[RMDB]
RNA sequence: GGGAACGACUCGAGUAGAGUCGAAAAGGCGCGCGAUGACCAAUCUGGCUCAUGGCAUUAUAAAGAUGCGUCACGCUGCGCGCACCGGCAUCGAAGCGCCGGAAGGCUUCUUCAGCGGUCGUGUCGACACGAGCGCUGACUUCGGUCAGCGCUCGUGAAAAGAAACAACAACAACAAC
Reactivity to DMS in 0.01 (KOAc 150mM, MgCl2 10mM, bicine 150mM(pH8.5), 24C), signal-to-noise 3, nucleotides 027 to 126: g020g050c010g030c000g030c000g000a280u010g000a040c040c050a220a140u000c080u000g060g010c100u010c200a090u040g010g020c040a110u010u020a160u010a110a100a050g010a010u000g000c210g020u010c000a060c040g040c030u000g030c070g020c000g000c050a100c010c010g010g010c070a050u010c110g000a070a080g010c300g010c010c000g010g030a110a070g020g000c040u010u010c030u000u000c040a050g020c150g030g000u000c020g030u000g010u000c040g030a290
Reactivity to 2A3 in 0.01 (KOAc 150mM, MgCl2 10mM, bicine 150mM(pH8.5), 24C), signal-to-noise 1, nucleotides 027 to 126: g060g010c040g010c010g020c010g130a170u030g000a010c000c030a040a140u100c070u120g000g020c030u010c150a190u280g090g000c020a010u080u240a130u240a300a180a050g000a010u040g040c050g000u000c000a050c080g040c100u160g040c000g000c000g000c040a020c000c010g010g000c000a040u130c100g160a130a000g070c040g000c070c000g000g020a010a020g010g000c000u120u000c000u050u020c210a020g040c000g040g000u020c010g010u000g010u050c040g020a020